Structure probing data (2A3) for a 177-nucleotide construct. Values cover nucleotides 27 to 126. Source: RMDB library OK1LIB, as collected in RNAgym. Reactivities are rounded to 0.1 and cut off at 0 and 3. The reactions ran in a buffer of 150 mM KOAc, 10 mM MgCl2 and 150 mM bicine (pH 8.5), at 24 C.
RNA sequence: GGGAACGACUCGAGUAGAGUCGAAAAGACGCACGAGUGCAGCGUCAGGAAGGAGCUCCGGAUUCUUCCAGUACUCGAAGGAAUGCGAAUAAGAGUUCACGUAUUCCAACCGGAGAAAAGAACUCAAGGGAUCGUAGUACUUCGGUACUACGAUCCCAAAAGAAACAACAACAACAAC
Reactivity to 2A3 in 0.01 (KOAc 150mM, MgCl2 10mM, bicine 150mM(pH8.5), 24C), signal-to-noise 1, nucleotides 027 to 126: g030a040c050g000c030a100c100g220a070g090u170g130c090a010g000c020g000u000c000a000g040g000a000a030g030g030a030g010c000u000c000c000g000g000a000u010u010c000u000u000c030c000a000g040u070a090c000u010c110g000a050a000g000g000a060a000u020g000c000g000a070a040u080a030a010g130a020g010u060u040c000a000c000g000u010a000u000u000c000c000a000a080c000c040g000g000a000g030a010a040a000a000g000a000a000c060u060c120a000a060